[RMDB]
An RNA of 177 nucleotides, treated with DMS and 2A3 and read out base by base.
RNA sequence: GGGAACGACUCGAGUAGAGUCGAAAAGAUAAAAGGUAGUAGCUGCGUGCUAUCGCCGAUCCUAACCCCCGUUUCGUCUUGUACGAAUCACUCUUGAACGAACUUAAAAUUGCAUCAUACGUCACGGCAGAUAUCUAUUGUUCGCAAUAGAUAUCUGAAAAGAAACAACAACAACAAC
Reactivity to DMS in 0.01 (KOAc 150mM, MgCl2 10mM, bicine 150mM(pH8.5), 24C), signal-to-noise 9, nucleotides 027 to 126: g000a100u010a060a070a140a160g000g020u000a060g020u000a010g010c010u010g020c230g030u010g010c000u000a010u000c090g010c010c000g000a120u000c010c020u020a090a300c050c010c000c020c030g010u000u000u000c010g020u000c050u010u000g020u010a030c020g000a050a030u000c060a100c110u010c060u000u000g010a080a080c100g010a080a060c090u010u010a040a050a070a100u000u000g000c060a050u000c070a060u000a070c060g010u000c040a040c090g000g010
Reactivity to 2A3 in 0.01 (KOAc 150mM, MgCl2 10mM, bicine 150mM(pH8.5), 24C), signal-to-noise 8, nucleotides 027 to 126: g050a010u140a080a120a010a020g010g000u020a050g010u000a010g090c010u070g130c140g200u210g000c020u030a020u150c050g000c000c010g010a050u000c000c000u050a130a160c000c000c000c010c020g000u010u020u010c010g010u000c030u070u150g020u040a010c000g000a010a010u030c020a040c040u080c010u030u050g070a080a030c050g010a050a020c030u070u080a050a070a080a140u080u070g030c010a030u030c010a020u070a130c040g040u020c040a010c040g050g000
Record summary
For 2A3, 13,527 sequencing reads were counted.